Source: RMDB library M2RFPK, as collected in RNAgym. An RNA of 207 nucleotides, treated with 2A3 and read out base by base. The 2A3 profile rests on 691 reads. 2A3 adducts were read by reverse transcription with SuperScript II with manganese. Reactivities are given for positions 27 through 156.
RNA sequence: GGGAACGACUCGAGUAGAGUCGAAAAACUGAUACCUUACGAGGUAUCAGAAUGACUUCGUGGUAGAGCGCCACGAACGGAAAAUAAAGAAAGCUCGAUUGAAACGCACCGUGUACGCCCGGUGCGAAAAAGUCGAUCCAGUUCGCUGGAUCGACAAGAAUCAUUGCUUCUUCGGAAGCAAUGAUUCAAAAGAAACAACAACAACAAC
Reactivity to 2A3 in 0.01 (KOAc 150mM, MgCl2 10mM, bicine 150mM(pH8.5), 24C), signal-to-noise 1, nucleotides 027 to 156: a000c000u020g000a000u000a000c000c000u020u050a050c290g100a020g000g000u000a000u000c000a000g020a000a030u110g050a060c030u000u000c000g000u000g000g030u030a070g020a010g010c020g010c000c000a000c000g000a000a010c010g060g070a090a000a020a010u060a020a000a020g250a050a060a000g010c010u010c000g130a150u060u210g090a140a120a000c000g000c000a000c000c000g040u060g030u280a110c150g170c030c040c000g000g000u010g010c000g000a030a000a000a000a000g000u000c000g000a000u010c000c000a000g050u070u060c110g120c150u010g010g000a000u000c000g000a000c000a000a000